Chemical mapping of a 207-nucleotide RNA with 2A3 and DMS. Values cover nucleotides 27 to 156. The reactions ran in a buffer of 150 mM KOAc, 10 mM MgCl2 and 150 mM bicine (pH 8.5), at 24 C. 2A3 adducts were read by reverse transcription with SuperScript II with manganese.
RNA sequence: GGGAACGACUCGAGUAGAGUCGAAAAGCGCGGUUUUCCUGGGAAGAGUUUUAGAGGACUGAGUUGGGGCACAAGCAGGCGACUGGUACCCAGAUUCACAAAACGUGUUAUGAUUGAUGAGUUCUCUGGGUGGAACGUUGGCUUGACAGCUGAGAACUGCAUUCUAAUUCUUCGGAAUUAGAAUGCAAAAAGAAACAACAACAACAAC
Reactivity to 2A3 in 0.01 (KOAc 150mM, MgCl2 10mM, bicine 150mM(pH8.5), 24C), signal-to-noise 2, nucleotides 027 to 156: g000c040g000c040g020g050u070u060u080u020c040c030u050g000g040g000a060a030g000a020g010u140u070u080u080a040g010a020g010g030a000c060u100g000a040g110u040u050g050g000g050g030c030a020c000a050a050g020c000a000g030g040c040g040a070c010u130g080g000u060a020c000c000c000a010g000a040u020u080c020a020c050a090a100a120a070c080g060u150g070u300u280a090u180g060a110u030u080g000a080u040g010a070g030u130u020c050u000c010u070g010g000g000u010g030g050a060a020c030g020u060u020g020g000c020u020u020g050a080c000a020g020c010u000g030a000g090a120a030c030
Reactivity to DMS in 0.01 (KOAc 150mM, MgCl2 10mM, bicine 150mM(pH8.5), 24C), signal-to-noise 1, nucleotides 027 to 156: g050c030g060c040g020g020u000u000u000u000c020c060u000g040g020g000a060a140g000a150g010u000u010u010u010a070g020a120g030g030a100c050u000g010a060g010u000u000g030g010g040g010c010a110c030a040a100g010c030a090g010g040c060g020a090c070u010g020g020u000a060c020c010c010a060g000a100u030u000c030a120c080a050a060a120a050c080g020u000g000u000u000a120u010g000a270u020u030g000a110u000g010a120g000u010u000c090u010c000u000g010g010g000u000g000g010a050a090c080g000u000u000g010g000c000u000u000g000a200c050a090g010c040u010g010a110g000a060a090c170